[RMDB]
RNA sequence: GGGAACGACUCGAGUAGAGUCGAAAACGUGCGUACUGGGCCGCCGGCACAAUGUUCGACCCAGCCGUCUCAGAGGUCGCGGUUCGACUACGAUCAGCCAGCAGGUCAGCGGGGUCCUCCUAGCUAGACUAUGGCACUAUUUCGAUAGUGCCAUAGUAAAAGAAACAACAACAACAAC
Reactivity to 2A3 in 0.01 (KOAc 150mM, MgCl2 10mM, bicine 150mM(pH8.5), 24C), signal-to-noise 3, nucleotides 027 to 126: c030g040u090g020c030g060u080a090c020u090g030g040g010c000c030g050c030c010g030g000c040a020c000a110a100u130g040u110u060c040g010a050c020c010c000a010g010c030c010g080u030c030u010c140a100g050a080g060g040u080c020g020c040g060g000u070u060c040g020a010c010u120a040c050g080a110u070c010a010g050c040c000a020g040c030a040g000g050u060c030a010g040c030g010g040g010g000u050c000c000u020c000c010u040a050g030c030u050a030g020
Reactivity to DMS in 0.01 (KOAc 150mM, MgCl2 10mM, bicine 150mM(pH8.5), 24C), signal-to-noise 6, nucleotides 027 to 126: c110g040u010g020c050g000u010a070c070u010g020g000g010c050c060g020c110c050g010g030c060a080c080a080a100u000g010u010u000c050g010a080c040c010c030a110g000c060c020g020u000c110u010c110a100g020a150g010g020u010c050g020c080g000g010u000u000c030g010a060c050u000a050c110g000a070u020c090a120g000c040c050a080g030c050a060g010g000u000c030a080g010c050g010g000g020g000u000c030c050u000c020c010u000a080g010c100u000a110g000